[RMDB]
RNA sequence: GGGAACGACUCGAGUAGAGUCGAAAAGUAUUGGAGCGGUAGUCACCUCCAUUAGAAUACCUGCAUAUCACGCAAGAGGACGCGAGUCAGCGUCACGGCCGAGCAGAAGAGUGAUAGUGACUAUCAGAAAUAUAAUUAUAUUCGUAUAAUUAUAUUUAAAAGAAACAACAACAACAAC
Reactivity to DMS in 0.01 (KOAc 150mM, MgCl2 10mM, bicine 150mM(pH8.5), 24C), signal-to-noise 3, nucleotides 027 to 126: g000u010a030u000u010g000g010a030g030c230g030g010u000a000g010u000c010a000c000c030u010c000c000a040u000u000a050g020a120a140u030a150c050c010u010g010c050a140u020a060u010c070a020c040g010c030a080a120g000a130g010g000a010c010g000c000g020a190g020u060c140a170g020c020g000u000c010a030c030g000g020c040c040g000a200g000c100a100g000a130a110g000a120g000u010g010a040u000a040g000u000g000a020c010u000a030u020c100a150g010
Reactivity to 2A3 in 0.01 (KOAc 150mM, MgCl2 10mM, bicine 150mM(pH8.5), 24C), signal-to-noise 3, nucleotides 027 to 126: g070u040a040u070u050g020g010a020g020c070g090g030u010a000g000u010c010a010c010c000u000c000c000a000u010u030a040g070a060a050u080a130c010c000u020g010c030a020u030a030u180c060a040c030g010c030a080a050g030a100g130g000a010c000g020c000g030a050g300u250c110a030g000c000g000u010c000a000c030g030g000c080c060g070a060g060c060a040g030a220a030g070a090g010u060g020a040u030a050g030u010g010a020c000u000a010u040c010a010g130

The record gives the reactivity of an RNA of 177 nucleotides to DMS and 2A3. For DMS, 3,759 sequencing reads were counted. Values are in units of 0.01, from 0 to 300, in steps of 10. It was measured as part of the RMDB library OK1LIB. Conditions: 150 mM KOAc, 10 mM MgCl2 and 150 mM bicine (pH 8.5), 24 C.